[RMDB]
RNA sequence: GGGAACGACUCGAGUAGAGUCGAAAAGAUGUGAUGGCAUCGUUACGAAGAUCACAAGGGACCUGGCCGUGACUUUUGCCCAAGGAGGAAUGGCAAAGCUGUGCAGGCGAAAUGAGAAAUUGCAAACCUCUGAUAACUUCUUCGGAAGUUAUCAGAGAAAAGAAACAACAACAACAAC
Reactivity to 2A3 in 0.01 (KOAc 150mM, MgCl2 10mM, bicine 150mM(pH8.5), 24C), signal-to-noise 1, nucleotides 027 to 126: g050a060u150g010u030g060a030u060g110g060c020a050u000c040g130u070u000a060c050g050a050a050g080a120u010c000a010c030a170a070g020g030g050a080c000c030u000g120g040c030c010g000u020g050a070c000u060u060u110u160g060c020c010c010a040a020g050g000a060g030g000a110a010u050g000g020c010a050a030a020g010c040u060g010u060g040c040a010g000g040c030g010a060a040a080u200g020a060g070a070a040a100u090u010g000c060a090a030a000c020
Reactivity to DMS in 0.01 (KOAc 150mM, MgCl2 10mM, bicine 150mM(pH8.5), 24C), signal-to-noise 1, nucleotides 027 to 126: g000a140u000g030u000g010a070u030g020g020c040a030u010c000g020u000u000a120c130g010a040a090g020a080u000c070a050c080a060a160g000g020g030a110c130c090u010g010g010c010c020g010u000g020a150c040u010u010u010u010g010c010c020c090a120a140g010g000a090g010g020a120a060u000g010g010c010a050a100a070g010c100u000g020u000g010c170a000g000g010c000g000a020a060a060u020g000a080g000a050a080a050u000u000g000c030a040a090a100c210